[RMDB]
RNA sequence: GGGAACGACUCGAGUAGAGUCGAAAAACAACGAGGUGAAAUCUGGCAUGCGGUUUGAUUCCGACGGUUAAUGUGAUCCGUAUCUAAGAUCGAUAUCCUUCGUUGUAUGAGGCGGAUCCAGCCAGUCGUAGUAGGACUUUUUCGAAAGUCCUACUACAAAAGAAACAACAACAACAAC
Reactivity to 2A3 in 0.01 (KOAc 150mM, MgCl2 10mM, bicine 150mM(pH8.5), 24C), signal-to-noise 6, nucleotides 027 to 126: a000c010a010a010c020g030a030g050g080u150g060a060a060a070u050c010u010g010g010c090a060u070g010c020g010g050u040u070u150g040a030u110u040c020c040g080a090c080g090g070u130u160a120a040u180g050u090g060a000u010c010c000g020u020a030u020c040u070a080a080g010a130u080c030g010a040u040a060u250c030c030u070u050c020g010u000u010g020u000a060u090g040a050g010g020c010g000g000a010u020c000c000a000g000c010c010a010g060u080c090
Reactivity to DMS in 0.01 (KOAc 150mM, MgCl2 10mM, bicine 150mM(pH8.5), 24C), signal-to-noise 7, nucleotides 027 to 126: a050c020a020a030c040g010a060g000g020u010g000a070a120a060u000c020u000g010g010c190a080u010g010c020g000g010u000u010u010g000a270u010u000c030c030g010a100c100g010g010u020u000a060a060u010g030u000g010a010u000c000c000g030u010a040u000c050u000a120a080g000a040u000c060g010a140u000a130u010c100c060u000u000c020g010u000u000g000u000a050u000g000a060g020g020c020g000g010a100u000c010c010a100g000c010c000a100g010u010c180